[RMDB]
RNA sequence: GGGAACGACUCGAGUAGAGUCGAAAACCAGCCAAUUUGGUCUCAGGAAAUCACUCUGCAGUGCUGGCUGGGAUUGGAAGUCAUUUUUAAUUUUGUGACAAAGACAGAUGUGUCCUACGGGAGUAGUAAGUGGUUUUACUGGUGAUAUUAAUGGAAACCACGGUAGCUAGUUCGCUAGCUACCGUGGAAAAGAAACAACAACAACAAC
Reactivity to 2A3 in 0.01 (KOAc 150mM, MgCl2 10mM, bicine 150mM(pH8.5), 24C), signal-to-noise 1, nucleotides 027 to 156: c000c000a000g020c000c000a060a110u070u050u230g140g000u010c010u020c060a020g000g100a040a040a070u160c050a050c080u100c050u030g020c040a100g050u020g170c040u030g020g070c020u020g020g010g020a020u000u080g040g080a090a080g050u050c050a020u000u010u010u170u300a060a300u200u220u110u100g000u010g010a020c040a000a000a000g050a140c100a040g080a070u060g050u020g060u000c010c020u040a030c080g080g020g070a110g010u050a020g010u050a050a000g040u010g110g000u020u000u000u070a040c000u000g000g020u030g000a000u010a000u180u000a050a120u070g030g020a110a030a010
An RNA of 207 nucleotides, treated with 2A3 and read out base by base. Reactivities are given for positions 27 through 156.